[RMDB]
RNA sequence: GGGAACGACUCGAGUAGAGUCGAAAAGGAGAUCGAAGAUGACCGACGUCAGCACGGUCAGGAUGUAGGUCCGCAUGCAUCCGAGUUGACGAAACUUCACGAUUUCCAAAGCGGACAAGAAGUCAAAGACGGCUAUAUACUUCGGUAUAUAGCCGUCAAAAGAAACAACAACAACAAC
Reactivity to DMS in 0.01 (KOAc 150mM, MgCl2 10mM, bicine 150mM(pH8.5), 24C), signal-to-noise 3, nucleotides 027 to 126: g000g020a000g000a000u000c000g030a220a080g030a180u010g000a030c000c000g000a200c030g020u010c260a020g000c140a100c030g010g000u030c020a030g010g000a010u000g000u000a000g010g000u000c030c020g000c010a090u000g000c000a000u000c000c010g000a020g020u000u030g030a130c170g000a130a020a000c020u020u000c100a110c020g000a040u010u000u000c000c010a050a050a170g000c000g000g000a010c020a190a110g020a150a080g000u010c050a090a100a140
Reactivity to 2A3 in 0.01 (KOAc 150mM, MgCl2 10mM, bicine 150mM(pH8.5), 24C), signal-to-noise 3, nucleotides 027 to 126: g000g000a000g010a000u000c000g030a120a030g060a180u190g030a010c020c010g040a090c050g150u200c090a020g030c180a020c060g030g030u020c020a010g000g000a000u000g000u000a000g000g000u000c000c000g000c010a000u010g000c000a000u000c010c000g000a000g020u000u020g050a100c100g070a070a020a000c020u010u020c030a040c070g010a020u000u010u000c000c000a040a070a000g000c020g000g000a000c000a000a070g080a140a000g110u190c140a150a020a000
Overview:
The record gives the reactivity of an RNA of 177 nucleotides to DMS and 2A3. 2A3 adducts were read by reverse transcription with SuperScript II with manganese. DMS adducts were read by reverse transcription with MarathonRT. It was measured as part of the RMDB library OK1LIB.